RNA sequence: GGGAACGACUCGAGUAGAGUCGAAAACAAGCAAGUAUCCGAGAGAUUAGCACGCCGAUCUCUGCGGCACCAUAUGUUACACCAUGGCAUCUGUGGGAUCACAUAGCAUCUUAUUGGCGUGACGAGAGGCUGCGGUCGGGUUCGCCCGAUUGCAGCCAAAAGAAACAACAACAACAAC
Reactivity to DMS in 0.01 (KOAc 150mM, MgCl2 10mM, bicine 150mM(pH8.5), 24C), signal-to-noise 4, nucleotides 027 to 126: c150a090a090g010c160a150a100g000u010a090u030c020c030g000a060g000a020g000a010u010u000a080g010c000a000c040g000c010c040g040a020u000c010u000c000u020g000c020g020g000c300a130c130c100a120u010a020u000g000u000u000a070c290a130c020c120a060u020g020g010c150a090u020c100u020g050u020g010g010g000a080u040c180a060c040a040u010a050g000c140a060u020c090u010u010a130u050u040g000g000c020g010u000g010a060c220g000a110g000a210
Reactivity to 2A3 in 0.01 (KOAc 150mM, MgCl2 10mM, bicine 150mM(pH8.5), 24C), signal-to-noise 8, nucleotides 027 to 126: c050a050a020g200c020a050a090g080u110a110u070c000c000g000a000g000a000g000a020u000u020a020g030c000a000c010g000c000c000g010a000u000c000u010c000u110g190c010g020g000c050a030c030c010a050u020a020u110g020u030u060a050c090a030c020c030a060u090g080g000c050a130u060c120u120g020u030g000g050g000a060u080c040a010c010a090u070a020g060c030a090u090c020u100u200a140u080u180g000g000c000g000u000g000a000c000g040a050g010a040